[RMDB]
RNA sequence: GGGAACGACUCGAGUAGAGUCGAAAAGAAAGAAAGAAACUAGCUCGCCAGUUAGCGAGGUCUGUCCCCACACGACAGAUAAUCGGGUGCAACUCCCGCCCCUUUUCCGAGGGUCAUCGGAACCAAAAAAACUCAGGCAACUUCGGUUGCCUGAGAAGAUACUCCACGAGUUCGCUCGUGGAGUAUCAAAAGAAACAACAACAACAAC
Reactivity to 2A3 in 0.01 (KOAc 150mM, MgCl2 10mM, bicine 150mM(pH8.5), 24C), signal-to-noise 1, nucleotides 027 to 156: g040a020a060a000g060a030a070a010g070a070a130a050c060u040a080g020c000u000c010g000c030c020a230g070u160u110a020g000c020g020a000g000g030u020c000u000g010u010c020c030c020c000a110c000a000c040g020a000c000a020g000a030u040a040a110u080c000g000g000g020u020g000c000a010a010c000u010c000c000c010g060c010c010c000c000u090u170u000u000c000c000g000a020g000g000g030u060c030a000u000c000g000g020a010a020c030c020a040a120a000a020a030a000a020c000u000c000a000g000g000c000a000a000c010u000u150c220g050g000u000u020g000c000c000u000g000a000g010a000a000